RNA sequence: GGGAACGACUCGAGUAGAGUCGAAAAGACCAAUCGUUCGCGAUUGGUCAAAAGGUGGAUGCUACGCUACCGAUGUAGCAAAAGUGCAGCUACAAAGCACAAAAACUUGGUUGUUCGCAACCAAGAAGUAUUCCACAUACUUCGGUAUGUGGAAUACAAAAGAAACAACAACAACAAC
Reactivity to DMS in 0.01 (KOAc 150mM, MgCl2 10mM, bicine 150mM(pH8.5), 24C), signal-to-noise 2, nucleotides 027 to 126: g010a010c000c000a010a000u000c010g020u000u000c220g040c020g010a030u010u000g010g000u000c000a030a030a070a120g020g040u020g000g040a200u000g010c020u000a020c040g010c060u010a170c040c100g000a080u000g020u000a010g000c020a040a050a090a110g010u000g010c000a050g010c120u020a080c170a090a090a100g020c050a020c070a100a060a040a080a130c000u000u000g000g000u000u000g000u000u050c190g030c010a010a020c010c000a020a000g000a050a080
Reactivity to 2A3 in 0.01 (KOAc 150mM, MgCl2 10mM, bicine 150mM(pH8.5), 24C), signal-to-noise 2, nucleotides 027 to 126: g000a000c000c000a000a000u010c010g030u040u050c290g010c010g150a000u010u000g000g000u000c000a010a000a000a010g130g000u100g030g070a080u070g050c020u030a020c030g020c010u020a030c000c060g070a090u140g010u010a000g010c000a090a000a010a020g040u030g010c010a010g010c020u040a090c070a090a130a020g030c040a010c000a030a070a040a050a010c010u000u010g000g020u000u010g030u040u060c210g030c070a010a010c010c000a000a000g000a010a010